[RMDB]
An RNA of 177 nucleotides, treated with 2A3 and DMS and read out base by base. It was measured as part of the RMDB library OK2TRN. Reactivities are given for positions 27 through 126. The reactions ran in a buffer of 150 mM KOAc, 10 mM MgCl2 and 150 mM bicine (pH 8.5), at 24 C.
RNA sequence: GGGAACGACUCGAGUAGAGUCGAAAAUCCAACACGACUUAACGGGUUGGCAUGGAUUGUAGGCGCCGCCCUAUACCUUGUCUGCCUCCCCGCGGUGCAUGGAGCCGGGCCACCUCGACCUGAAUGGAUCGUUACAAUGUUUCGACAUUGUAACGAUAAAAGAAACAACAACAACAAC
Reactivity to 2A3 in 0.01 (KOAc 150mM, MgCl2 10mM, bicine 150mM(pH8.5), 24C), signal-to-noise 4, nucleotides 027 to 126: u000c000c000a000a010c090a020c060g210a040c050u150u140a180a020c060g020g010g020u010u080g030g000c020a040u070g000g050a100u100u120g090u090a020g020g020c130g080c210c090g020c030c030c010u020a010u020a020c000c000u040u070g050u050c020u050g020c010c010u030c000c000c000c000g020c020g010g030u040g010c020a050u100g030g020a010g010c030c010g000g020g000c020c010a030c000c020u020c020g050a060c010c010u030g090a050a040u140g090g050
Reactivity to DMS in 0.01 (KOAc 150mM, MgCl2 10mM, bicine 150mM(pH8.5), 24C), signal-to-noise 7, nucleotides 027 to 126: u000c010c000a080a140c140a080c080g010a110c120u000u010a110a160c120g000g000g000u000u010g010g010c060a090u010g000g000a100u010u000g010u000a030g000g010c030g010c140c130g000c110c030c010u000a050u010a040c050c030u000u000g010u010c070u000g010c020c020u010c030c020c020c050g030c060g000g010u000g010c050a070u000g000g000a110g000c040c060g000g010g010c030c030a040c040c020u000c030g010a090c030c030u000g010a110a090u010g010g010